Source information: Source: RMDB library OK2TRN, as collected in RNAgym. The record gives the reactivity of an RNA of 177 nucleotides to 2A3 and DMS. Values cover nucleotides 27 to 126.
RNA sequence: GGGAACGACUCGAGUAGAGUCGAAAACUGAGCUACCCGGAGGGGAGGAUGAUGAUGAGUUGUUCAAUGAUGAGAACGAAGCAUCGUCUAGCCAAACCGAUGAAAGACAGCUUUUGUCCAAGAUGAGUCACCUCCGAUAAUUCGUUAUCGGAGGUGAAAAAGAAACAACAACAACAAC
Reactivity to 2A3 in 0.01 (KOAc 150mM, MgCl2 10mM, bicine 150mM(pH8.5), 24C), signal-to-noise 1, nucleotides 027 to 126: c030u020g000a010g130c030u050a030c060c000c020g020g070a040g000g060g030g000a000g030g000a010u070g000a000u020g000a000u010g020a020g080u030u010g010u000u090c030a000a080u300g170a110u160g000a060g000a120a010c000g000a050a010g030c000a020u010c000g030u000c010u040a050g020c000c000a020a000a010c000c000g010a030u000g000a040a000a010g060a050c030a010g080c030u070u110u220u150g050u000c060c010a140a070g150a260u300g090a030g130
Reactivity to DMS in 0.01 (KOAc 150mM, MgCl2 10mM, bicine 150mM(pH8.5), 24C), signal-to-noise 3, nucleotides 027 to 126: c080u000g040a090g010c050u010a080c090c030c010g020g020a270g010g000g040g000a300g000g010a130u010g010a010u000g000a020u000g010a050g010u000u000g000u010u010c030a150a110u000g010a150u030g010a230g000a000a000c000g000a040a010g010c000a010u000c030g000u000c000u020a160g010c010c020a010a300a130c030c010g020a160u030g020a040a070a050g020a050c100a010g000c030u000u000u000u000g000u010c010c020a060a030g000a090u000g010a100g010